[RMDB]
RNA sequence: GGGAACGACUCGAGUAGAGUCGAAAAGCGGAAGCUCUGAUAUGGCUUUGAAAUUAGGAAAGAAGGCUCUUCUUGGAAAAGUUGGAGAGCGUAAUGGCGACCCAACAUUGGCAGAGGUCGAGCUUGACGACUAUAUACUAUUCGUAGUAUAUAGUCGAAAAGAAACAACAACAACAAC
Reactivity to 2A3 in 0.01 (KOAc 150mM, MgCl2 10mM, bicine 150mM(pH8.5), 24C), signal-to-noise 9, nucleotides 027 to 126: g070c050g050g040a030a010g010c010u010c050u140g090a090u080a090u260g050g000c030u040u040u080g120a110a130a100u200u150a110g040g070a080a060a030g080a060a040g060g000c010u000c000u050u010c010u050u070g080g050a100a070a050a070g050u070u030g020g010a040g000a010g030c010g010u060a060a090u110g140g000c000g010a040c000c010c000a020a030c040a150u060u130g100g000c040a020g030a030g090g040u030c020g010a010g020c000u030u030g020a020
Reactivity to DMS in 0.01 (KOAc 150mM, MgCl2 10mM, bicine 150mM(pH8.5), 24C), signal-to-noise 9, nucleotides 027 to 126: g010c050g010g010a070a060g010c030u010c050u020g010a100u020a080u020g000g010c030u000u010u010g010a070a080a100u020u030a090g010g010a090a070a070g000a110a090g000g010c040u010c030u010u000c020u010u010g010g010a100a070a070a100g000u010u000g000g000a030g000a300g000c000g010u010a040a060u040g010g000c010g000a230c140c000c000a010a030c040a130u010u010g010g010c100a080g010a060g000g000u000c050g000a070g010c010u000u000g000a300
Structure probing data (2A3 and DMS) for a 177-nucleotide construct. The data come from the RNA Mapping Database (RMDB), library OK1LIB. Reactivities are given for positions 27 through 126. The DMS profile rests on 42,158 reads. The 2A3 profile rests on 33,768 reads.